Notes:
The record gives the reactivity of an RNA of 177 nucleotides to DMS and 2A3. In probing experiments dimethyl sulfate is read out at A N1 and C N3, which are open when not base-paired. The RNA was probed in 150 mM KOAc, 10 mM MgCl2 and 150 mM bicine (pH 8.5) at 24 C.
[RMDB]
RNA sequence: GGGAACGACUCGAGUAGAGUCGAAAAGUUGUCUUCUUCGGAAGACAACAAAUAAAAUCAGCGGUAAAUAAUUGGAGGCGUUUACCGCUGAACGCCUCGAUAAAACUUGAGCCUUCGGGCUCAAGAACAAUCAUGUAACCUUCGGGUUACAUGAUUGAAAAGAAACAACAACAACAAC
Reactivity to DMS in 0.01 (KOAc 150mM, MgCl2 10mM, bicine 150mM(pH8.5), 24C), signal-to-noise 2, nucleotides 027 to 126: g010u000u000g000u000c000u000u000c000u000u010c180g040g010a020a000g000a010c000a000a000c000a030a100a110u000a060a060a080a070u000c000a000g020c000g020g020u000a030a010a060u000a040a110u000u000g000g000a020g020g010c060g010u000u000u000a130c010c000g000c010u000g010a000a010c030g010c000c000u000c040g010a070u000a060a050a080a100c000u000u000g010a000g000c000c010u000u010c140g030g020g020c000u000c000a000a000g020a080a140
Reactivity to 2A3 in 0.01 (KOAc 150mM, MgCl2 10mM, bicine 150mM(pH8.5), 24C), signal-to-noise 3, nucleotides 027 to 126: g010u000u000g010u020c010u010u000c010u030u050c210g100g000a010a000g000a000c000a000a010c000a000a010a000u080a020a030a000a050u010c010a000g000c010g090g230u150a040a080a080u070a080a120u200u150g200g010a020g000g020c020g010u000u000u040a160c000c000g000c000u000g000a000a000c000g000c020c010u010c010g020a070u130a170a130a020a040c010u000u000g000a000g000c000c020u030u050c170g040g000g000c000u000c000a000a000g000a000a010